[RMDB]
RNA sequence: GGGAACGACUCGAGUAGAGUCGAAAACAGAAAGAGAGGACUAUAUUAAUGCCUAAAAUCACAGGCAAGCUCGAAACAAUAACGAACGCCCCGUCGGCAGUGCGGGAAGUGUGGCUAAGACCACCAUCCACACGCCCCAGUGGUACGGGUCUGAUCGGAAUAGUUCGGUGUUCGCACCGAACUAUUCAAAAGAAACAACAACAACAAC
Reactivity to 2A3 in 0.01 (KOAc 150mM, MgCl2 10mM, bicine 150mM(pH8.5), 24C), signal-to-noise 1, nucleotides 027 to 156: c070a000g160a000a140a000g040a020g000a000g000g070a030c050u030a110u010a010u300u120a140a020u170g000c000c000u120a130a080a090a070u300c150a050c020a110g000g030c050a020a000g010c010u050c020g060a060a050a000c140a150a150u190a120a050c060g010a090a020c080g000c000c000c010c000g000u010c000g070g050c110a070g020u030g100c220g010g000g010a000a180g110u120g000u000g180g070c040u150a180a000g040a130c020c020a020c010c010a030u050c000c000a000c020a000c040g000c010c010c010c010a000g050u030g040g030u110a010c090g000g000g130u130c150u000g020a060u090c110g000
An RNA of 207 nucleotides, treated with 2A3 and read out base by base. Values cover nucleotides 27 to 156. The 2A3 profile rests on 375 reads. For 2A3 the reverse transcriptase was SuperScript II with manganese.